[RMDB]
RNA sequence: GGGAACGACUCGAGUAGAGUCGAAAAACGCUUAAGAUGUUUUGGAUGGCAAGUUUCAAUAAACUGCGGUUUUAUUCCUGCUUCUGAAGAGGUGCCCGAGAUGUGAACCUCAUUUCCACCACUACCAAAAUUUUAGUACCUUCGGGUACUAAAAUUUAAAAGAAACAACAACAACAAC
Reactivity to 2A3 in 0.01 (KOAc 150mM, MgCl2 10mM, bicine 150mM(pH8.5), 24C), signal-to-noise 5, nucleotides 027 to 126: a000c030g020c050u120u100a090a030g020a100u110g050u030u050u070u070g060g020a050u050g080g010c040a060a100g000u020u040u170c120a110a060u230a130a050a010c020u040g020c020g050g040u040u090u070u060a070u050u020c010c010u010g030c020u030u040c030u090g100a110a060g020a010g040g020u040g020c030c030c020g050a050g030a060u140g060u080g080a040a050c010c000u010c000a060u050u050u020c000c010a030c030c030a080c060u070a060c020c070a030
Reactivity to DMS in 0.01 (KOAc 150mM, MgCl2 10mM, bicine 150mM(pH8.5), 24C), signal-to-noise 3, nucleotides 027 to 126: a110c060g000c070u020u030a100a080g020a070u020g010u000u000u020u000g000g020a060u020g000g000c080a070a080g010u000u010u030c150a110a130u030a030a030a030c030u000g050c020g010g010u020u010u030u010a070u020u000c020c000u010g020c030u000u010c030u000g010a080a050g010a070g020g000u000g010c060c080c050g000a080g000a060u000g010u020g010a080a060c040c050u010c040a080u000u000u020c030c010a070c100c030a090c080u010a100c070c090a040
Record summary:
Chemical mapping of a 177-nucleotide RNA with 2A3 and DMS. The RNA was probed in 150 mM KOAc, 10 mM MgCl2 and 150 mM bicine (pH 8.5) at 24 C. For DMS the reverse transcriptase was MarathonRT. It was measured as part of the RMDB library OK1LIB.